[RMDB]
Description
An RNA of 177 nucleotides, treated with DMS and 2A3 and read out base by base. For DMS, 4,477 sequencing reads were counted. The reactions ran in a buffer of 150 mM KOAc, 10 mM MgCl2 and 150 mM bicine (pH 8.5), at 24 C. For 2A3, 3,605 sequencing reads were counted. The data come from the RNA Mapping Database (RMDB), library OK2TST. 2A3 adducts were read by reverse transcription with SuperScript II with manganese.
RNA sequence: GGGAACGACUCGAGUAGAGUCGAAAAUUUGCGGCAACAGUUGCUGUAAACCAACAGCCAACCCCGCAUGGGUACCCGCACUGCCCGAAGCCACAACCACCGAGCUGAAGGUGACAUUUCCAGCCGAUCAUACAGGAGGAUUCGUCCUCCUGUAUGAAAAAGAAACAACAACAACAAC
Reactivity to DMS in 0.01 (KOAc 150mM, MgCl2 10mM, bicine 150mM(pH8.5), 24C), signal-to-noise 5, nucleotides 027 to 126: u000u000u010g010c000g000g010c100a100a150c210a140g010u000u000g020c010u000g010u010a030a080a170c290c140a080a080c050a040g010c040c070a040a080c080c070c020c020g030c090a070u000g010g020g000u010a130c180c020c040g010c070a050c160u000g010c050c000c010g000a090a080g000c040c040a040c070a060a080c080c030a060c050c010g000a110g000c040u000g010a080a080g000g000u000g000a070c160a070u000u010u000c020c010a070g010c030c090g000a100
Reactivity to 2A3 in 0.01 (KOAc 150mM, MgCl2 10mM, bicine 150mM(pH8.5), 24C), signal-to-noise 2, nucleotides 027 to 126: u040u010u050g010c010g020g000c050a090a030c040a200g030u050u010g010c000u000g010u050a110a060a130c040c020a020a020c010a020g000c040c050a020a010c020c000c010c010g070c050a050u070g030g000g010u040a040c010c000c030g010c030a040c050u040g030c000c000c010g020a070a010g010c020c020a040c010a070a030c010c010a020c020c000g030a030g020c000u020g040a090a000g030g040u030g040a030c020a100u050u050u030c030c040a040g040c030c010g050a070